[RMDB]
RNA sequence: GGGAACGACUCGAGUAGAGUCGAAAAACAAGCCCUUGCCGAUGAGCAACAGGUCAUCGAUAAAUACGAACUUCUCUUGAGCGGAGAGAUGAUGAAUACCGGCGAAAAACGCAAGGUGCUUCACCACGCUAGGUAAACGGUUCGCCGUUUACCUAGCAAAAGAAACAACAACAACAAC
Reactivity to DMS in 0.01 (KOAc 150mM, MgCl2 10mM, bicine 150mM(pH8.5), 24C), signal-to-noise 3, nucleotides 027 to 126: a170c210a040a020g000c000c000c000u020u000g000c000c020g000a300u000g000a230g000c020a070a100c210a100g010g000u010c000a000u000c010g010a160u020a070a040a100u020a130c140g000a140a200c120u000u000c010u000c000u000u000g010a120g040c170g010g000a060g000a030g000a070u010g000a060u000g000a060a120u000a080c030c020g000g000c010g010a030a040a030a090a200c300g000c000a020a030g000g040u000g030c010u010u000c070a090c020c000a090c250
Reactivity to 2A3 in 0.01 (KOAc 150mM, MgCl2 10mM, bicine 150mM(pH8.5), 24C), signal-to-noise 3, nucleotides 027 to 126: a000c030a010a000g010c020c000c000u000u000g000c010c010g060a050u030g020a010g030c040a040a140c040a110g020g080u030c020a020u000c030g080a050u150a170a190a020u300a090c100g100a160a070c090u070u060c010u010c000u050u110g100a060g120c070g080g020a000g020a010g010a030u080g020a010u020g010a060a040u080a190c010c000g020g000c000g050a070a000a000a020a010c030g000c010a000a000g020g060u170g060c010u050u020c020a040c010c000a060c040

This 177-nucleotide RNA was probed chemically with DMS and 2A3. Conditions: 150 mM KOAc, 10 mM MgCl2 and 150 mM bicine (pH 8.5), 24 C. It was measured as part of the RMDB library OK2TRN.